This 207-nucleotide RNA was probed chemically with 2A3 and DMS. It was measured as part of the RMDB library M2RFPK. The 2A3 profile rests on 1,263 reads. The RNA was probed in 150 mM KOAc, 10 mM MgCl2 and 150 mM bicine (pH 8.5) at 24 C. For 2A3 the reverse transcriptase was SuperScript II with manganese.

RNA sequence: GGGAACGACUCGAGUAGAGUCGAAAAAAGACCGAGAGGUUCAAGCUUAUAGGGCAGAAAGCGGGGGACAGCAGUACUAAACAUUCCCUGUGGCUGAGACGAAGGUAGUCCUCCAACAGCGUCUCAAAAAAGCAGCAGUCCUUCGGGACUGCUGCAAGUGUAUAAUCACGUUCGCGUGAUUAUACACAAAAGAAACAACAACAACAAC
Reactivity to 2A3 in 0.01 (KOAc 150mM, MgCl2 10mM, bicine 150mM(pH8.5), 24C), signal-to-noise 2, nucleotides 027 to 156: a000a000g040a010c020c020g020a020g000a030g020g040u130u110c070a100a000g000c000u160u140a020u100a170g020g020g030c080a040g120a150a150a010g060c030g020g000g000g010g010a000c000a010g070c020a010g060u070a060c030u120a020a110a030c010a040u030u050c000c000c000u030g030u040g030g030c040u020g000a000g010a010c010g000a070a030g050g000u010a020g020u030c010c000u010c010c010a030a010c000a010g040c010g000u020c010u020c020a040a040a040a020a060a000g010c000a000g000c000a000g000u000c000c010u020u010c040g070g000g000a000c000u000g010c000u000g000c000a000a000
Reactivity to DMS in 0.01 (KOAc 150mM, MgCl2 10mM, bicine 150mM(pH8.5), 24C), signal-to-noise 1, nucleotides 027 to 156: a000a040g000a040c080c000g060a240g000a180g060g000u000u000c060a060a170g010c030u000u000a150u000a060g010g020g060c030a100g000a070a080a040g030c150g000g050g080g040g000a020c050a100g010c070a070g000u000a200c080u010a030a080a110c080a220u000u000c000c000c000u000g040u000g020g020c000u050g000a100g000a020c020g000a080a020g000g000u000a060g010u000c020c000u020c010c010a100a040c050a180g040c050g000u010c000u010c010a020a100a040a030a040a110g060c000a050g000c000a020g000u000c000c000u000u010c300g000g020g020a000c000u000g000c000u000g000c000a000a020